Conditions: 150 mM KOAc, 10 mM MgCl2 and 150 mM bicine (pH 8.5), 24 C. The record gives the reactivity of an RNA of 177 nucleotides to DMS and 2A3. It was measured as part of the RMDB library OK2TST. For DMS, 6,031 sequencing reads were counted.
RNA sequence: GGGAACGACUCGAGUAGAGUCGAAAACGUUUCUCAAAGUCGAAUUAGAAUGUGACAUCGACGGAAGAAGUUAUAGACAAAUAAUACAUUCUAAAACCGUAAAAACAGAUAAUGAUACGAUACAAACGGCCGUGGUCUUGUUCGCGGGGCCGCGGCCAAAAGAAACAACAACAACAAC
Reactivity to DMS in 0.01 (KOAc 150mM, MgCl2 10mM, bicine 150mM(pH8.5), 24C), signal-to-noise 6, nucleotides 027 to 126: c120g000u010u000u000c000u000c060a090a150a180g010u000c020g020a070a130u000u010a020g010a060a040u000g010u000g000a150c200a080u000c070g010a050c030g000g000a170a110g010a090a090g000u000u000a100u000a140g020a120c120a070a050a080u010a080a080u010a060c020a050u000u000c010u010a050a040a130a090c130c040g020u020a020a050a060a090a080c070a050g010a110u000a050a080u000g000a150u000a030c040g000a070u000a040c190a060a100a120c210
Reactivity to 2A3 in 0.01 (KOAc 150mM, MgCl2 10mM, bicine 150mM(pH8.5), 24C), signal-to-noise 4, nucleotides 027 to 126: c020g010u030u040u030c040u020c010a040a070a000g070u040c000g030a010a020u030u000a030g030a050a030u040g010u030g040a040c030a100u040c040g020a010c010g030g000a050a050g030a060a010g030u060u080a100u070a110g080a030c010a030a060a000u030a020a010u070a050c010a020u000u000c000u020a040a040a050a050c060c010g030u030a010a050a000a080a110c030a030g080a070u110a140a040u120g060a030u050a060c040g080a010u140a140c060a000a110a030c060